RNA sequence: GGGAACGACUCGAGUAGAGUCGAAAACACAGACCGCGGGAUCUCUUAUGACCAACUACUUUGAUAGCCCCUUCAAAGGCAAGCUGCUUUCUGAGCAAGUGAAGAACCCCAAUAUCAAAGUUGGGCGCUAUUAUCUCACCUUCGGGUGAGAUAAUAGAAAAGAAACAACAACAACAAC
Reactivity to DMS in 0.01 (KOAc 150mM, MgCl2 10mM, bicine 150mM(pH8.5), 24C), signal-to-noise 2, nucleotides 027 to 126: c060a130c110a080g010a080c090c010g000c050g030g000g010a090u000c050u010c070u000u010a090u000g000a090c050c030a090a090c060u000a120c040u010u000u010g000a020u000a080g000c010c000c000c060u000u010c100a070a070a120g000g010c060a090a140g030c060u000g000c000u000u000u000c070u000g020a090g020c050a060a090g000u000g000a080a080g000a090a100c100c010c000c030a070a130u000a030u000c120a050a080a060g000u000u000g000g000g050c170g020
Reactivity to 2A3 in 0.01 (KOAc 150mM, MgCl2 10mM, bicine 150mM(pH8.5), 24C), signal-to-noise 1, nucleotides 027 to 126: c040a000c000a000g110a040c000c070g010c030g010g030g050a080u000c030u070c030u130u200a090u250g070a050c020c000a030a030c010u060a010c020u090u090u050g020a050u060a090g060c010c000c000c000u040u140c060a140a160a000g050g000c010a050a000g000c020u080g030c010u000u070u060c020u020g040a040g020c020a200a040g050u020g110a090a090g040a060a110c000c010c010c050a040a040u150a050u130c050a070a110a020g020u020u040g000g040g010c050g020